[RMDB]
RNA sequence: GGGAACGACUCGAGUAGAGUCGAAAACAUACGGACUUCGGUCCGUAUGAAAGAUCCUCAAAUUGACGCAAACUUCCGCGUCAUCGCGAGGAAGCGAGGAAAAAAUCGAGGUGUUCGCACCUCGAAACUGGUGAUAUGACUUCGGUCAUAUCACCAGAAAAGAAACAACAACAACAAC
Reactivity to 2A3 in 0.01 (KOAc 150mM, MgCl2 10mM, bicine 150mM(pH8.5), 24C), signal-to-noise 2, nucleotides 027 to 126: c010a010u010a010c000g020g000a000c010u040u030c190g020g000u000c000c000g000u010a000u000g010a000a000a000g100a050u030c000c020u020c020a040a090a030u050u010g020a010c010g010c040a020a170a300c260u290u080c160c090g000c010g000u000c000a020u040c010g000c010g010a020g020g050a020a040g060c060g100a090g100g010a170a100a040a010a000a040u000c000g010a000g000g000u000g020u050u100c210g020c080a010c000c010u010c020g010a000a000a000
Reactivity to DMS in 0.01 (KOAc 150mM, MgCl2 10mM, bicine 150mM(pH8.5), 24C), signal-to-noise 2, nucleotides 027 to 126: c000a000u000a000c000g000g000a030c000u010u010c190g050g020u000c000c000g000u010a000u000g000a040a120a140g000a110u010c000c000u030c010a090a260a060u000u010g000a010c040g010c000a140a130a180c280u040u020c190c160g000c000g000u010c130a010u010c040g010c300g020a060g000g010a040a040g000c090g010a150g020g050a000a010a060a080a060a090u000c010g000a000g020g030u000g020u010u020c250g030c020a000c000c000u000c010g000a010a080a070